[RMDB]
RNA sequence: GGGAACGACUCGAGUAGAGUCGAAAAACAAAACUGCGAAGGGGGGACGGAGAAGCCUAUGUUGGCCGGGCGACGGUUGUCCCGGUUUAAGCGUGUAGGCUGGUUUUCCAGGCAAAUAAAAAAAAAACUUUUCAUUACGAUUCGUCGUAAUGAAAAGAAAAGAAACAACAACAACAAC
Reactivity to DMS in 0.01 (KOAc 150mM, MgCl2 10mM, bicine 150mM(pH8.5), 24C), signal-to-noise 1, nucleotides 027 to 126: a110c080a070a040a080a120c130u000g010c020g030a060a140g020g010g020g030g010g000a090c100g010g010a110g010a080a050g010c010c000u000a050u000g000u000u000g020g000c010c010g010g010g010c300g030a070c170g000g010u050u010g000u040c000c000c000g000g010u000u000u000a040a050g030c120g010u030g020u000a000g000g010c010u000g010g000u010u000u010u010c010c040a110g010g010c070a100a050a080u040a020a000a000a010a000a000a070a110a090a150
This 177-nucleotide RNA was probed chemically with DMS. For DMS, 806 sequencing reads were counted. For DMS the reverse transcriptase was MarathonRT. Reactivities are given for positions 27 through 126. The reactions ran in a buffer of 150 mM KOAc, 10 mM MgCl2 and 150 mM bicine (pH 8.5), at 24 C.